Chemical mapping of a 177-nucleotide RNA with DMS and 2A3. Source: RMDB libraries RFM100 and RFMREP, as collected in RNAgym.
RNA sequence: GGGAACGACUCGAGUAGAGUCGAAAAGCCCUCUGCGAAGCGCCCUGCGAUGCCCCAGCCACUGUGAACCUUUCUGCCUGCCCAGAUACACUCAACCCAGGACGAAAUCAGCCUUGGACACCCUGCACAGUCAUUUAUUAUUCGUAAUAAAUGACUGAAAAGAAACAACAACAACAAC
Reactivity to DMS in 0.01 (KOAc 150mM, MgCl2 10mM, bicine 150mM(pH8.5), 24C), signal-to-noise 9, nucleotides 027 to 126: g000c010c010c000u010c050u000g010c040g010a100a110g020c080g010c030c010c020u010g010c060g010a090u010g000c040c010c020c030a100g010c040c030a040c050u010g010u010g000a090a100c070c040u000u010u010c040u010g000c020c030u000g000c020c010c020a060g010a090u010a070c090a060c050u000c060a050a100c060c020c020a070g000g010a070c040g000a060a060a080u010c070a080g000c020c020u010u010g010g010a100c090a080c010c010c010u000g010c090a200
Reactivity to 2A3 in 0.01 (KOAc 150mM, MgCl2 10mM, bicine 150mM(pH8.5), 24C), signal-to-noise 9, nucleotides 027 to 126: g040c000c020c000u020c030u050g050c040g050a070a030g030c010g020c010c000c020u030g020c030g040a060u090g030c010c000c000c010a020g020c020c000a040c030u050g030u060g080a060a080c010c000u040u090u060c020u050g030c000c000u030g010c000c000c000a010g010a020u080a040c040a010c020u050c020a030a080c010c000c010a020g030g020a040c050g060a050a030a070u090c030a030g010c000c000u020u040g030g010a010c010a050c030c010c000u030g010c050a030

Notes:
For 2A3 the reverse transcriptase was SuperScript II with manganese. The RNA was probed in 150 mM KOAc, 10 mM MgCl2 and 150 mM bicine (pH 8.5) at 24 C.